Overview
An RNA of 177 nucleotides, treated with 2A3 and DMS and read out base by base.

RNA sequence: GGGAACGACUCGAGUAGAGUCGAAAAGGUUUGAAGGCACUUGAUUUUCUCAAUGUCUCUAUUCCAUGUCCAAAUCUGGAAGCCCAGCGGCGCCCAGCACGAACCUUGCGGUGGUCACCCACUCGCAGAAGUCUGCCUAUUUCGAUAGGCAGACUUCAAAAGAAACAACAACAACAAC
Reactivity to 2A3 in 0.01 (KOAc 150mM, MgCl2 10mM, bicine 150mM(pH8.5), 24C), signal-to-noise 3, nucleotides 027 to 126: g050g000u040u070u090g070a010a060g010g010c020a070c170u030u000g000a040u170u070u200u070c110u020c000a020a020u030g050u000c010u020c010u040a070u140u000c000c020a030u120g080u040c030c000a080a070a040u070c050u040g050g040a060a040g010c000c010c040a070g020c120g030g000c030g000c000c020c000a010g030c030a010c050g040a040a050c000c020u020u050g000c000g000g000u030g020g040u170c030a070c000c000c000a020c010u130c030g000c000a020
Reactivity to DMS in 0.01 (KOAc 150mM, MgCl2 10mM, bicine 150mM(pH8.5), 24C), signal-to-noise 1, nucleotides 027 to 126: g000g050u010u000u050g090a010a020g040g020c000a010c190u000u000g000a050u030u050u000u030c040u000c000a070a010u000g000u000c010u000c010u000a030u000u000c040c000a150u030g040u020c030c020a010a130a150u000c040u000g010g000a100a220g000c050c010c020a020g000c110g000g040c000g000c120c000c010a050g000c290a010c170g000a060a030c010c110u010u000g000c020g000g020u010g000g000u000c100a130c150c040c010a060c000u080c010g000c150a010